Source information: Conditions: 150 mM KOAc, 10 mM MgCl2 and 150 mM bicine (pH 8.5), 24 C. An RNA of 177 nucleotides, treated with 2A3 and DMS and read out base by base. For DMS the reverse transcriptase was MarathonRT. 2A3 adducts were read by reverse transcription with SuperScript II with manganese.
[RMDB]
RNA sequence: GGGAACGACUCGAGUAGAGUCGAAAAGAUAUGGACCUUCCGAGUUCCGAUCGGAAACGAUCGAGAACGAUGAGGAGGUCCUAAGUCAAAACCGUUAUUGGGUAGCUUCGGCUACCCAAUAACGGAACAGGAAUGUAUACUUCGGUAUACAUUCCUGAAAAGAAACAACAACAACAAC
Reactivity to 2A3 in 0.01 (KOAc 150mM, MgCl2 10mM, bicine 150mM(pH8.5), 24C), signal-to-noise 2, nucleotides 027 to 126: g010a010u080a040u120g010g000a010c010c010u020u050c010c010g050a050g020u010u010c010c000g000a000u000c000g020g040a080a060a040c010g000a000u000c030g040a100g000a300a000c060g050a100u200g040a240g000g000a010g000g000u000c000c000u000a010a010g000u000c020a020a010a130a200c030c000g000u010u000a000u010u020g000g000g000u010a010g010c010u090u060c300g040g000c010u030a010c000c000c000a010a010u000a000a000c000g000g000a000a000
Reactivity to DMS in 0.01 (KOAc 150mM, MgCl2 10mM, bicine 150mM(pH8.5), 24C), signal-to-noise 2, nucleotides 027 to 126: g010a050u000a300u010g000g010a010c000c010u000u000c000c010g010a200g000u000u000c000c010g000a000u010c000g000g010a170a080a160c010g010a010u000c000g000a170g000a010a010c000g010a130u010g010a140g020g000a000g010g010u000c010c000u000a020a090g000u010c040a130a060a080a190c010c000g010u000u000a000u000u000g000g000g010u000a000g000c020u000u010c230g030g000c000u000a010c010c000c000a000a010u000a000a000c000g010g000a020a050